[RMDB]
RNA sequence: GGGAACGACUCGAGUAGAGUCGAAAACUUACCGGAGGCGACAUGGACCCUGAACCCACCCCUCUCCCGCGAUGGAGAAUUUUCCUUUUCCGGUAAGCCUGCCUCUGCUGUCUUACCGGUGUGUAAGCGUGCUAUCACCGUUCGCGGUGAUAGCACGAAAAGAAACAACAACAACAAC
Reactivity to DMS in 0.01 (KOAc 150mM, MgCl2 10mM, bicine 150mM(pH8.5), 24C), signal-to-noise 1, nucleotides 027 to 126: c050u000u010a040c080c050g040g000a060g000g000c030g020a090c170a100u000g010g000a080c030c050c010u010g000a160a080c010c020c010a210c010c000c000c000u000c000u040c120c000c030g020c210g010a160u000g000g000a090g030a040a140u040u040u000u010c060c030u000u000u000u040c000c000g000g000u050a000a000g010c080c030u000g000c050c270u000c120u040g000c020u000g000u020c000u010u000a010c010c000g010g000u000g020u030g010u000a060a050g000
Reactivity to 2A3 in 0.01 (KOAc 150mM, MgCl2 10mM, bicine 150mM(pH8.5), 24C), signal-to-noise 2, nucleotides 027 to 126: c010u050u060a060c040c030g020g000a010g000g010c020g050a100c090a180u080g050g000a020c070c000c000u000g010a010a030c020c000c000a060c010c010c030c000u010c030u030c000c000c020g200c080g000a070u210g000g010a030g030a060a010u060u070u120u100c020c010u170u020u080u050c000c000g010g000u000a000a000g000c000c000u040g000c000c080u180c040u160g000c000u030g030u020c000u000u010a000c000c030g010g010u050g000u030g000u020a020a020g100
Annotation
Structure probing data (DMS and 2A3) for a 177-nucleotide construct. 2A3 adducts were read by reverse transcription with SuperScript II with manganese. For 2A3, 935 sequencing reads were counted. Values cover nucleotides 27 to 126. Source: RMDB libraries RFM100 and RFMREP, as collected in RNAgym. Reactivities are rounded to 0.1 and cut off at 0 and 3.